Conditions: 150 mM KOAc, 10 mM MgCl2 and 150 mM bicine (pH 8.5), 24 C. An RNA of 207 nucleotides, treated with 2A3 and DMS and read out base by base.
[RMDB]
RNA sequence: GGGAACGACUCGAGUAGAGUCGAAAAAGUCACCUAUUACGAUAGGUGACAUUUGAUCCAGCGAACAAUUCAGUUGCGAGAUUCGAGGUUUCAGUCUGAAUCAUAGUAGCCAUUACGAUGGCUACAACUCACUCCCGACUGUUCGCAGUCGGGAGAAGACAAGUCUUAAGUUCGCUUAAGACUUGUCAAAAGAAACAACAACAACAAC
Reactivity to 2A3 in 0.01 (KOAc 150mM, MgCl2 10mM, bicine 150mM(pH8.5), 24C), signal-to-noise 6, nucleotides 027 to 156: a010g000u010c000a010c000c010u000a010u040u090a090c270g040a020u010a010g000g000u000g000a000c000a000u010u010u080g050a050u060c000c000a020g140c020g010a000a000c010a060a140u010u010c000a000g000u000u010g000c000g010a000g010a000u000u000c000g010a020g030g070u120u200u200c040a050g130u060c020u000g030a000a010u050c060a060u070a070g000u000a000g000c000c010a010u030u060a060c250g170a030u010g000g000c000u000a000c000a000a000c010u090c050a050c000u000c000c000c000g010a000c000u010g040u080u100c240g000c100a000g000u010c010g000g030g000a000g000a000a000
Reactivity to DMS in 0.01 (KOAc 150mM, MgCl2 10mM, bicine 150mM(pH8.5), 24C), signal-to-noise 2, nucleotides 027 to 156: a100g020u000c000a020c000c000u000a030u000u010a100c260g030a110u000a020g010g020u010g000a020c000a030u010u010u000g010a130u000c010c020a060g020c050g010a060a050c060a140a110u010u000c070a110g000u000u000g000c030g000a120g000a100u000u000c030g020a240g020g000u000u000u010c050a070g000u000c040u010g000a030a040u010c120a040u000a150g010u010a030g020c010c000a050u000u000a150c170g040a130u000g010g010c000u000a000c000a020a020c100u000c040a160c000u000c010c000c010g010a020c000u010g020u000u010c260g070c000a040g030u000c000g000g010g000a000g030a000a080